[RMDB]
RNA sequence: GGGAACGACUCGAGUAGAGUCGAAAAGAUAUGGAUGUAGGAGGAGGUAUAGCCGUAUGUCGGAAACGACAUACUGGCUGCGAACUCCUGACAUCCUAAGUCAAAUCGCGAACUUCGGUUCGCGAAACAUUUCUAGUAGCUUCGGCUACUAGAAAUGAAAAGAAACAACAACAACAAC
Reactivity to 2A3 in 0.01 (KOAc 150mM, MgCl2 10mM, bicine 150mM(pH8.5), 24C), signal-to-noise 3, nucleotides 027 to 126: g000a010u010a000u060g000g000a000u010g010u030a020g020g070a000g010g040a040g150g240u180a300u300a300g030c010c010g000u000a010u010g000u000c000g000g010a010a010a000c010g010a000c010a000u000a000c020u060g000g000c000u000g000c090g040a020a000c000u000c000c000u000g040a010c000a000u000c000c000u000a000a000g000u000c020a010a050a240u070c010g000c010g000a000a000c000u060u090c290g140g000u000u000c000g000c000g000a000a000a010
Reactivity to DMS in 0.01 (KOAc 150mM, MgCl2 10mM, bicine 150mM(pH8.5), 24C), signal-to-noise 4, nucleotides 027 to 126: g000a010u000a030u020g000g000a020u000g010u000a020g010g010a030g020g010a210g030g010u010a070u020a010g020c000c000g010u000a000u000g010u000c000g020g000a000a000a030c000g010a000c000a000u000a000c000u020g100g010c000u000g000c140g000a080a300c000u000c000c000u000g010a020c000a000u000c000c000u010a010a080g000u000c000a090a120a160u010c010g010c000g020a020a010c000u000u020c260g020g020u000u000c000g010c000g000a020a060a130